[RMDB]
RNA sequence: GGGAACGACUCGAGUAGAGUCGAAAAAUCACCGGUGGGGAACCCCAUACGGCAACGGCGUAGAAGUAAAUGCUAACCAAUCCGUGGUAUCUACGCCACGGAGCAUCCACGGAUAACUCUAACAAGGCUAAGCGUCUCGGUUUCGACCGAGACGCAAGCUGUGAUCCUAGUUCGCUAGGAUCACAGCAAAAGAAACAACAACAACAAC
Reactivity to 2A3 in 0.01 (KOAc 150mM, MgCl2 10mM, bicine 150mM(pH8.5), 24C), signal-to-noise 1, nucleotides 027 to 156: a000u090c000a010c090c000g000g010u000g000g060g020g070a070a110c060c010c050c030a080u240a250c010g010g020c060a060a000c020g000g000c000g000u020a020g000a030a020g010u050a000a000a040u030g040c060u120a020a090c120c030a090a020u020c000c000g010u000g000g010u000a010u050c000u010a020c010g020c000c000a000c030g060g010a010g020c000a020u000c010c010a010c000g020g000a020u010a000a030c090u090c050u130a080a260c120a120a000g020g040c100u110a050a110g020c000g000u000c000u000c020g000g080u060u050u140c300g040a010c040c030g000a010g150a020c000g020c000a000a010
An RNA of 207 nucleotides, treated with 2A3 and read out base by base. Reactivities are given for positions 27 through 156. Conditions: 150 mM KOAc, 10 mM MgCl2 and 150 mM bicine (pH 8.5), 24 C.